[RMDB]
RNA sequence: GGGAACGACUCGAGUAGAGUCGAAAAGAAGGUAUGAGCGUUGGAAGGCGCUUCCGUGUGAGCGGAAUUCUUUCAUACCAAGAACGGGAUAACCGGAAGGAGUUGGCGGACGGAUGUGGCCGAGAAAGGGUAAAUCAUUCUUCGGAAUGAUUUACCCAAAAGAAACAACAACAACAAC
Reactivity to DMS in 0.01 (KOAc 150mM, MgCl2 10mM, bicine 150mM(pH8.5), 24C), signal-to-noise 1, nucleotides 027 to 126: g010a060a100g000g000u000a000u010g010a030g020c040g050u000u000g000g100a120a080g000g000c000g000c030u000u000c000c000g030u000g000u020g050a100g000c000g010g000a040a020u030u010c150u010u010u000c000a030u020a030c040c000a130a030g000a130a100c040g000g000g000a070u040a060a180c080c050g020g010a100a020g010g020a090g030u040u000g000g000c030g000g000a020c010g040g030a100u000g030u020g000g030c050c030g000a040g030a170a050a100
Reactivity to 2A3 in 0.01 (KOAc 150mM, MgCl2 10mM, bicine 150mM(pH8.5), 24C), signal-to-noise 2, nucleotides 027 to 126: g120a040a020g000g000u020a000u020g050a030g010c020g020u050u040g060g080a100a090g040g000c000g000c000u010u000c000c000g050u060g030u090g190a050g000c000g000g020a010a020u110u010c040u110u140u000c010a000u010a000c010c000a020a030g120a050a000c040g030g000g010a140u080a060a110c080c020g000g000a030a050g010g020a070g030u100u090g040g000c050g000g000a090c030g000g010a020u080g020u070g060g000c010c010g060a020g030a060a060a040

Background:
Structure probing data (DMS and 2A3) for a 177-nucleotide construct. Reactivities are given for positions 27 through 126. The 2A3 profile rests on 1,230 reads. DMS adducts were read by reverse transcription with MarathonRT. The reactions ran in a buffer of 150 mM KOAc, 10 mM MgCl2 and 150 mM bicine (pH 8.5), at 24 C.